[RMDB]
RNA sequence: GGGAACGACUCGAGUAGAGUCGAAAAGAUAUGGAAAGCUAUGAAGGUGGUGGACAUCGAUCUCGGAAACGAGGGAGUCCUCACUGGAGCUUUCCUAAGUCAAAAUCGAGGAGUUCGCUCCUCGAAACGAACAAUACAGCUUCGGCUGUAUUGUUCGAAAAGAAACAACAACAACAAC
Reactivity to 2A3 in 0.01 (KOAc 150mM, MgCl2 10mM, bicine 150mM(pH8.5), 24C), signal-to-noise 2, nucleotides 027 to 126: g000a020u080a060u090g020g030a040a000a010g010c000u070a300u300g010a030a060g050g020u020g050g300u210g030g000a000c010a200u240c100g130a190u010c020u000c040g020g010a080a100a040c010g000a010g000g040g020a000g000u020c000c010u000c000a000c000u020g020g000a000g000c000u020u000u000c000c000u010a040a000g000u020c020a020a010a050a280u070c010g020a020g020g030a000g040u100u100c250g040c100u000c000c000u000c000g000a040a030a010
Reactivity to DMS in 0.01 (KOAc 150mM, MgCl2 10mM, bicine 150mM(pH8.5), 24C), signal-to-noise 2, nucleotides 027 to 126: g030a040u010a300u000g000g000a040a000a000g000c000u000a210u010g000a090a230g000g000u000g000g000u000g020g010a010c000a260u000c180g000a060u010c000u000c020g000g000a080a150a140c000g000a010g000g010g000a050g020u010c000c020u000c000a000c020u000g010g000a000g020c000u000u000u000c000c000u000a000a050g000u000c050a060a060a090a100u000c000g010a000g000g010a030g010u000u000c240g000c020u000c000c010u000c020g000a010a020a060